Structure probing data (DMS and 2A3) for a 177-nucleotide construct. Reactivities are given for positions 27 through 126.

[RMDB]
RNA sequence: GGGAACGACUCGAGUAGAGUCGAAAACCCAGACCGUUCGCGGUCUGGGAAAACCGGAAUAAUCAUGGGCCCAUGAGCCGAACCGGAAGGGCGUCCGCCCAAAAACUUGUGUCUUCGGACACAAGAAGUUCCAUUUAACGUUCGCGUUAAAUGGAACAAAAGAAACAACAACAACAAC
Reactivity to DMS in 0.01 (KOAc 150mM, MgCl2 10mM, bicine 150mM(pH8.5), 24C), signal-to-noise 2, nucleotides 027 to 126: c010c000c000a030g010a000c010c010g020u000u000c210g040c000g040g000u000c000u030g020g000g000a010a030a020a140c000c030g010g010a150a140u000a080a090u000c070a040u000g000g000g020c070c100c120a100u000g000a070g000c090c030g000a070a080c020c000g010g030a170a040g030g000g000c010g010u000c090c050g000c010c000c010a040a070a060a070a210c010u000u020g010u000g010u000c000u000u030c160g020g010a010c000a000c010a000a000g000a060a040
Reactivity to 2A3 in 0.01 (KOAc 150mM, MgCl2 10mM, bicine 150mM(pH8.5), 24C), signal-to-noise 3, nucleotides 027 to 126: c000c000c000a000g000a010c000c010g030u060u060c220g000c030g110g000u000c000u000g000g000g000a080a090a010a010c020c020g000g070a120a210u240a100a050u120c090a150u090g050g030g030c060c040c050a130u140g010a020g020c040c030g010a050a060c020c000g020g030a050a030g060g010g010c010g060u080c060c100g010c000c010c000a030a110a000a010a010c000u000u000g010u000g000u000c010u010u060c250g120g000a010c000a000c000a010a000g000a020a020